An RNA of 207 nucleotides, treated with 2A3 and DMS and read out base by base. For DMS the reverse transcriptase was MarathonRT. The RNA was probed in 150 mM KOAc, 10 mM MgCl2 and 150 mM bicine (pH 8.5) at 24 C. The DMS profile rests on 3,205 reads. Values cover nucleotides 27 to 156.
[RMDB]
RNA sequence: GGGAACGACUCGAGUAGAGUCGAAAAUGUGGAGUUCGCUCCACAGAAAAGGGGUCUUGACGAGGGACAUGACGAUCACUGAAGCCUCCACGGUGACCGUCAACAGCCUCCCCACCGUCAAGACGGAGGCACCCGAACCGUGAGCUUCGGCUCACAACAGAUACAAGAAUUUCGAUUCUUGUAUCUGAAAAGAAACAACAACAACAAC
Reactivity to 2A3 in 0.01 (KOAc 150mM, MgCl2 10mM, bicine 150mM(pH8.5), 24C), signal-to-noise 4, nucleotides 027 to 156: u040g000u000g000g010a000g020u090u110c170g140c100u010c010c000a000c010a000g040a000a140a010a010g170g020g030g000u010c010u000u000g000a000c020g020a080g040g010g040a060c090a190u070g000a000c000g000a010u010c000a000c010u010g010a070a010g020c000c000u000c010c030a030c010g010g000u000g010a000c020c000g000u030c010a060a090c120a070g180c020c060u160c040c020c000c010a050c030c020g020u010c010a000a000g000a000c010g000g000a000g000g010c000a000c000c000c010g030a030a050c060c060g000u000g000a000g000c030u070u130c300g070g000c000u010c000a000c000a000a010
Reactivity to DMS in 0.01 (KOAc 150mM, MgCl2 10mM, bicine 150mM(pH8.5), 24C), signal-to-noise 2, nucleotides 027 to 156: u010g030u000g020g010a020g050u020u000c270g020c020u000c000c010a010c020a030g000a000a080a110a150g030g010g020g000u000c010u000u000g010a040c020g020a080g000g050g030a140c130a210u040g010a040c040g000a040u000c020a040c020u000g030a040a070g010c010c060u010c010c020a300c040g000g030u010g000a010c020c010g000u000c000a000a150c120a220g010c070c080u000c010c010c000c010a070c080c010g040u000c020a000a020g010a060c030g010g030a050g100g030c040a130c030c010c010g000a000a080c080c030g000u000g010a040g050c000u000u010c250g040g000c040u010c000a000c000a040a150